Structure probing data (DMS and 2A3) for a 177-nucleotide construct. The data come from the RNA Mapping Database (RMDB), library TTRDES. For DMS, 2,743 sequencing reads were counted. DMS adducts were read by reverse transcription with MarathonRT. 2A3 adducts were read by reverse transcription with SuperScript II with manganese.
RNA sequence: GGGAACGACUCGAGUAGAGUCGAAAAGAUAUGGAAAUUCAUGGGAGCGUUCUACUCGGAAACGAGUAAGACGCGAGGAUCAUGGAAUUUCCUAAGUCAAAUCUCACAGUCUUCGGACUGUGAGAAACCAAAAUGAUGUGUUCGCACAUCAUUUUGGAAAAGAAACAACAACAACAAC
Reactivity to DMS in 0.01 (KOAc 150mM, MgCl2 10mM, bicine 150mM(pH8.5), 24C), signal-to-noise 2, nucleotides 027 to 126: g000a000u000a080u030g000g010a010a020a040u000u000c010a010u000g000g010g020a010g020c000g020u010u000c060u010a010c010u000c000g010g000a040a020a050c000g000a030g040u000a000a030g000a010c010g020c010g010a040g000g010a010u010c010a010u000g010g000a020a060u000u000u000c000c000u000a000a100g000u000c000a120a140a180u000c000u000c010a010c020a020g000u000c010u000u010c240g030g000a020c000u020g030u000g010a000g000a000a090a170
Reactivity to 2A3 in 0.01 (KOAc 150mM, MgCl2 10mM, bicine 150mM(pH8.5), 24C), signal-to-noise 1, nucleotides 027 to 126: g000a000u030a010u070g000g020a000a030a040u060u000c010a010u010g000g040g050a080g000c000g000u040u040c010u000a010c020u000c000g030g010a010a070a000c010g010a000g000u000a010a030g000a000c020g020c010g030a040g030g000a020u000c010a020u060g110g070a050a090u030u030u030c030c000u020a020a010g020u000c040a000a090a300u010c000u040c000a010c000a010g030u000c020u040u240c300g170g010a000c010u000g010u010g000a000g000a000a010a000